An RNA of 207 nucleotides, treated with 2A3 and read out base by base.
The RNA was probed in 150 mM KOAc, 10 mM MgCl2 and 150 mM bicine (pH 8.5) at 24 C.
The 2A3 profile rests on 1,897 reads.
For 2A3 the reverse transcriptase was SuperScript II with manganese.
RNA sequence: GGGAACGACUCGAGUAGAGUCGAAAAAUCAUCACCAAACGGUGAGGCUGGUUUUGUGCUCCAUGAGCUUGUCCUCAGACGCCUGUAACACGUUUCUCAGCCCAGAGCUGGAAACGCUUAUUGGAAGACACAAGCCAGAAUGUCGUUGCUGGGGUGGCCACCAGAAACUAUUCGUAGUUUCUGGUGGAAAAGAAACAACAACAACAAC
Reactivity to 2A3 in 0.01 (KOAc 150mM, MgCl2 10mM, bicine 150mM(pH8.5), 24C), signal-to-noise 2, nucleotides 027 to 156: a000u040c020a000u010c010a010c050c000a060a060a010c030g000g040u090g080a130g110g000c020u010g000g000u030u230u300u130g010u020g010c020u020c000c020a040u020g000a020g050c070u150u160g050u080c020c070u080c060a060g020a090c080g100c030c040u060g030u070a080a030c040a020c090g010u000u000u010c300u050c040a010g010c000c030c060a120g010a040g020c000u020g000g010a010a000a000c010g000c010u040u050a080u120u100g020g010a080a020g110a030c000a000c000a000a010g000c010c000a010g010a030a050u110g020u010c000g000u030u030g040c140u070g010g000g040g010u050g020g000